[RMDB]
RNA sequence: GGGAACGACUCGAGUAGAGUCGAAAAGACAGCUGAGGAUGAUUUAAGUUAUCCCUGUCUGAAAUGACACUUUUGUGAAGAGUCAUGGUUUACUGAGGCUCGAAAAACGCGGCCGUUCGCGGCCGCGCCAUUCUCUAGGGUUCGCCCUAGAGAAUGGAAAAGAAACAACAACAACAAC
Reactivity to 2A3 in 0.01 (KOAc 150mM, MgCl2 10mM, bicine 150mM(pH8.5), 24C), signal-to-noise 2, nucleotides 027 to 126: g040a020c010a020g090c140u160g130a050g140g000a020u030g020a010u000u130u300a300a140g050u070u000a020u000c000c020c000u020g040u030c000u020g030a070a060a010u080g020a020c000a020c040u220u160u170u210g160u120g100a160a210g010a010g000u000c000a020u130g090g110u170u280u080a110c120u110g050a050g000g000c000u010c030g020a070a020a060a030a000c000g050c000g040g030c030c060g060u050u050c280g010c000g110g030c000c020g050c000g010
Reactivity to DMS in 0.01 (KOAc 150mM, MgCl2 10mM, bicine 150mM(pH8.5), 24C), signal-to-noise 2, nucleotides 027 to 126: g030a120c010a010g000c300u020g000a150g010g000a010u000g000a030u000u010u010a090a140g000u000u000a030u000c000c000c000u000g010u000c000u000g010a070a070a120u000g000a120c050a090c060u000u000u000u000g010u000g000a060a170g000a040g020u000c000a060u000g010g010u010u000u000a040c130u010g030a120g000g000c030u000c050g000a040a070a040a150a200c030g040c010g020g030c020c030g050u000u000c140g020c010g020g020c000c020g070c020g000
Chemical mapping of a 177-nucleotide RNA with 2A3 and DMS. The reactions ran in a buffer of 150 mM KOAc, 10 mM MgCl2 and 150 mM bicine (pH 8.5), at 24 C. For 2A3 the reverse transcriptase was SuperScript II with manganese.